[RMDB]
RNA sequence: GGGAACGACUCGAGUAGAGUCGAAAAGAUAUGGAGUCAUAAAUAGCCGUGGCGACUUGGAUUUACAUCAGCUCGGAAACGAGCUGAGUGUUGUCAGUCGACCACGGCUAUUUAUGACUCCUAAGUCGAAGAAUUGUUAGUUCGCUAACAAUUCUUCAAAAGAAACAACAACAACAAC
Reactivity to DMS in 0.01 (KOAc 150mM, MgCl2 10mM, bicine 150mM(pH8.5), 24C), signal-to-noise 2, nucleotides 027 to 126: g010a140u000a300u000g010g010a020g010u000c010a000u000a010a020a020u000a000g000c000c010g030u000g000g010c010g000a030c010u000u020g050g010a030u010u020u000a020c010a090u000c000a010g000c010u000c000g000g000a120a100a300c010g020a000g020c000u020g010a010g020u000g020u000u010g010u000c010a020g000u010c000g010a200c000c010a010c000g000g020c000u000a000u000u010u000a010u000g010a000c000u000c000c000u000a000a040g000u010c150
The record gives the reactivity of an RNA of 177 nucleotides to DMS.
The DMS profile rests on 3,810 reads.
Conditions: 150 mM KOAc, 10 mM MgCl2 and 150 mM bicine (pH 8.5), 24 C.